[RMDB]
RNA sequence: GGGAACGACUCGAGUAGAGUCGAAAAGUCAAUUUGAAGGCGGUGUUGAGGAACUGGGUCUCACCCGGUAUCGCGCGGCUGAAUUAAUGCGCCAAGCUAAGUUCAUCACAUCUUUGCCAGAAGACAAGCGGGUGGAAAUGCUCUCACUGCCCAAGUCGCAACCUAAAUAUUUCGAUAUUUAGGUUGCAAAAGAAACAACAACAACAAC
Reactivity to 2A3 in 0.01 (KOAc 150mM, MgCl2 10mM, bicine 150mM(pH8.5), 24C), signal-to-noise 5, nucleotides 027 to 156: g050u040c020a020a080u070u010u180g160a160a060g000g000c020g010g000u020g010u140u140g010a030g000g030a040a040c080u080g060g040g030u070c070u040c090a090c010c000c020g020g010u090a100u100c030g000c000g000c010g040g050c030u080g080a040a060u150u130a120a070u220g050c010g010c030c030a060a010g000c010u070a060a030g030u020u040c030a070u080c040a090c000a060u030c000u040u070u080g060c010c010a010g040a060a010g040a030c020a090a040g050c060g030g000g000u020g010g030a020a080a050u140g030c000u000c000u000c010a010c010u020g000c000c010c000a020a010g050u070c050
Reactivity to DMS in 0.01 (KOAc 150mM, MgCl2 10mM, bicine 150mM(pH8.5), 24C), signal-to-noise 2, nucleotides 027 to 156: g010u010c060a060a110u010u000u000g000a140a110g020g040c000g000g020u000g030u000u000g020a040g000g030a050a090c040u000g020g040g000u000c130u000c070a080c010c020c000g020g040u000a040u020c050g030c100g000c150g010g010c090u010g000a060a090u000u000a060a080u010g020c070g050c020c140a090a230g010c050u000a090a050g020u000u000c040a040u000c030a060c050a080u000c050u000u000u020g050c050c050a110g010a100a170g000a050c030a020a160g010c070g000g000g020u000g000g000a070a040a130u000g000c010u000c040u000c050a110c000u000g000c000c010c000a040a110g030u010c110

Notes:
This 207-nucleotide RNA was probed chemically with 2A3 and DMS. In probing experiments dimethyl sulfate is read out at A N1 and C N3, which are open when not base-paired. Values cover nucleotides 27 to 156. The RNA was probed in 150 mM KOAc, 10 mM MgCl2 and 150 mM bicine (pH 8.5) at 24 C. For 2A3, 3,813 sequencing reads were counted. High 2A3 reactivity points to a flexible backbone, as in loops and unpaired stretches. For 2A3 the reverse transcriptase was SuperScript II with manganese.